An RNA of 207 nucleotides, treated with 2A3 and read out base by base. For 2A3 the reverse transcriptase was SuperScript II with manganese.
[RMDB]
RNA sequence: GGGAACGACUCGAGUAGAGUCGAAAAGUCGUCGAGCUGUCGUGGAUGGUCGAAGAACCGGGUGUGUCGAUUCUGCACACCGCGCACGAGUUCCAAACCGCGUUGGAAUCCAUGCAGCGGCUCGAGGAUCUGAUUCGCGCGCACCCGAAGCUCGAGAGAUACCCCAGAAGUUCGCUUCUGGGGUAUCAAAAGAAACAACAACAACAAC
Reactivity to 2A3 in 0.01 (KOAc 150mM, MgCl2 10mM, bicine 150mM(pH8.5), 24C), signal-to-noise 2, nucleotides 027 to 156: g080u070c050g060u000c000g000a000g000c010u050g020u300c010g020u150g050g060a130u090g000g080u070c140g130a300a140g000a160a000c000c000g040g000g000u020g000u000g010u040c040g030a110u170u060c030u050g000c020a000c000a000c020c010g000c000g000c020a000c000g040a070g030u000u050c010c020a030a030a100c040c030g000c030g080u080u030g020g010a030a070u070c050c040a090u150g030c050a030g000c000g010g030c060u120c120g020a110g000g020a040u080c070u210g020a080u020u000c000g000c000g010c000g050c020a040c010c000c010g000a000a000g010c000u000c000g000a000g000a000